Background
This 170-nucleotide RNA was probed chemically with 2A3 and DMS. Reactivities are rounded to 0.1 and cut off at 0 and 3.

[RMDB]
RNA sequence: GGGAACGACUCGAGUAGAGUCGAAAAGUGGAAAACGUACGUUUUAUAUCACAGCAAAUGGCGGUAUUUCAUUCUGUCGUAGGCAUAAUUGGAAUUGUGUGGAUUGUGACACUGCAGGUGUGGGGAAUAGGGCCAAACUUCGGUUUGGCCAAAAGAAACAACAACAACAAC
Reactivity to 2A3 in 0.01 (KOAc 150mM, MgCl2 10mM, bicine 150mM(pH8.5), 24C), signal-to-noise 3, nucleotides 027 to 129: g080u060g010g040a020a000a000a010c060g060u210a040c020g020u050u050u000u010a150u020a030u070c140a010c000a020g050c010a000a030a040u230g020g000c000g010g030u070a220u040u100u020c120a060u100u000c000u050g060u020c060g060u030a000g010g050c020a010u000a050a050u220u100g000g070a090a080u010u000g000u000g000u020g040g070a020u010u070g020u000g050a020c040a000c100u020g000c000a050g000g010u050g000u050g020g000g000g000a060a060u030a190g020
Reactivity to DMS in 0.01 (KOAc 150mM, MgCl2 10mM, bicine 150mM(pH8.5), 24C), signal-to-noise 4, nucleotides 027 to 129: g030u000g000g030a040a020a040a040c070g040u040a090c100g010u000u000u040u000a070u040a120u010c000a060c090a080g050c130a000a000a000u030g060g040c030g020g060u020a070u000u050u020c050a060u030u030c040u050g020u050c140g070u080a040g030g050c000a070u020a030a040u040u020g020g030a060a120u020u030g040u000g020u020g040g030a130u040u040g070u030g030a030c020a050c040u040g000c030a040g000g050u010g010u000g010g060g010g010a080a050u020a020g050